[RMDB]
RNA sequence: GGGAACGACUCGAGUAGAGUCGAAAACCGAGAAGCUUCGGCUUCUCGGAAAUAAAGUGCGAAAUAAAUCAGGAAACUGAACUGCAAAGCACAAGGAGAAAAAAACCGUCUUGUUCGCAAGACGGAACACAAUUCUUAACUUCGGUUAAGAAUUGUGAAAAGAAACAACAACAACAAC
Reactivity to DMS in 0.01 (KOAc 150mM, MgCl2 10mM, bicine 150mM(pH8.5), 24C), signal-to-noise 3, nucleotides 027 to 126: c000c000g000a020g020a020a010g010c000u000u020c300g020g010c000u010u000c000u000c000g010g000a000a030a070u010a090a080a160g000u000g010c000g010a110a090a060u010a040a130a150u000c000a010g010g000a140a130a210c030u000g000a010a070c190u000g010c140a100a100a160g020c010a010c010a070a080g010g000a220g020a000a020a080a100a120a100a110c010c000g010u000c000u000u000g000u000u010c190g010c000a010a010g000a020c000g000g000a040a030
Reactivity to 2A3 in 0.01 (KOAc 150mM, MgCl2 10mM, bicine 150mM(pH8.5), 24C), signal-to-noise 3, nucleotides 027 to 126: c000c000g000a010g000a010a000g000c040u140u180c270g020g000c000u010u000c070u000c000g000g030a020a000a000u070a010a080a030g010u010g010c010g080a120a060a080u130a020a080a050u050c010a000g050g000a070a030a060c040u020g010a030a030c080u100g060c090a130a110a030g000c000a000c030a030a060g170g050a170g190a080a060a010a000a020a010a030c000c000g000u010c010u020u000g050u030u070c180g000c080a000a000g010a000c000g000g000a020a000